[RMDB]
RNA sequence: GGGAACGACUCGAGUAGAGUCGAAAAGGAGCCGAUGACAGGGCGAUGACCGACGCCAAUCCCGCUUUCGACACGGUCCACCCCAGCGGGCACAUUCUUGUUCGGUCCUGCCGCGGUGGAUACAUGCUCACUGCCGGGUAUUCGUACCCGGCAGUGAAAAAGAAACAACAACAACAAC
Reactivity to 2A3 in 0.01 (KOAc 150mM, MgCl2 10mM, bicine 150mM(pH8.5), 24C), signal-to-noise 3, nucleotides 027 to 126: g020g000a040g040c000c060g040a100u070g050a060c080a070g020g000g110c040g030a040u150g020a080c010c010g010a030c000g020c010c000a060a100u060c000c000c000g060c040u080u050u100c140g050a050c050a030c150g030g000u000c000c000a020c000c000c000c000a000g040c000g000g010g090c060a000c000a040u280u120c090u170u230g100u190u140c120g040g020u010c000c000u090g020c000c010g040c020g000g000u020g000g000a010u060a140c030a070u130g020c020
Reactivity to DMS in 0.01 (KOAc 150mM, MgCl2 10mM, bicine 150mM(pH8.5), 24C), signal-to-noise 1, nucleotides 027 to 126: g000g000a110g040c000c050g000a100u000g000a130c110a160g000g000g030c000g000a110u000g000a030c030c090g000a090c000g000c000c030a220a090u000c030c000c000g070c110u000u000u040c000g000a050c070a080c140g000g020u000c000c030a090c060c000c000c060a090g020c080g000g000g000c100a030c150a200u140u000c140u010u040g000u000u010c030g000g000u030c000c030u000g000c000c010g040c300g000g000u000g010g000a060u070a000c020a200u020g010c100